[RMDB]
RNA sequence: GGGAACGACUCGAGUAGAGUCGAAAAGAUAUGGACGUCAAGUGGACAUGAUGGAGAUCGGAAACGAUCUUUCAUCAACAGCCACUGACGUCCUAAGUCAAAACCCUGUUUCUUCGGAAACAGGGAAGAUUGAUAAGUACUUCGGUACUUAUCAAUCAAAAGAAACAACAACAACAAC
Reactivity to 2A3 in 0.01 (KOAc 150mM, MgCl2 10mM, bicine 150mM(pH8.5), 24C), signal-to-noise 7, nucleotides 027 to 126: g010a000u020a010u050g000g000a010c000g010u020c080a220a170g010u010g000g030a090c190a300u170g000a010u010g010g000a020g000a000u010c000g000g010a010a010a010c020g000a000u000c010u000u050u060c010a000u000c010a020a070c140a070g010c000c000a000c000u000g000a000c000g000u000c000c000u000a000a010g000u000c000a020a040a060a140c000c000c000u000g000u000u000u000c020u030u060c260g230g010a000a010a010c000a010g010g000g000a010a020
Reactivity to DMS in 0.01 (KOAc 150mM, MgCl2 10mM, bicine 150mM(pH8.5), 24C), signal-to-noise 6, nucleotides 027 to 126: g000a000u000a060u010g000g000a010c000g010u000c000a060a080g030u000g010g010a040c120a110u010g010a040u000g000g000a010g010a010u000c000g020g000a010a010a040c000g010a000u000c000u000u000u030c000a000u000c000a050a070c170a250g010c010c000a020c000u000g000a010c000g010u000c000c000u000a000a050g000u000c000a130a130a120a180c000c000c000u000g000u000u000u000c000u000u010c210g030g000a000a010a010c000a010g000g000g000a010a010

An RNA of 177 nucleotides, treated with 2A3 and DMS and read out base by base. Conditions: 150 mM KOAc, 10 mM MgCl2 and 150 mM bicine (pH 8.5), 24 C. For 2A3, 35,038 sequencing reads were counted. Reactivities are given for positions 27 through 126.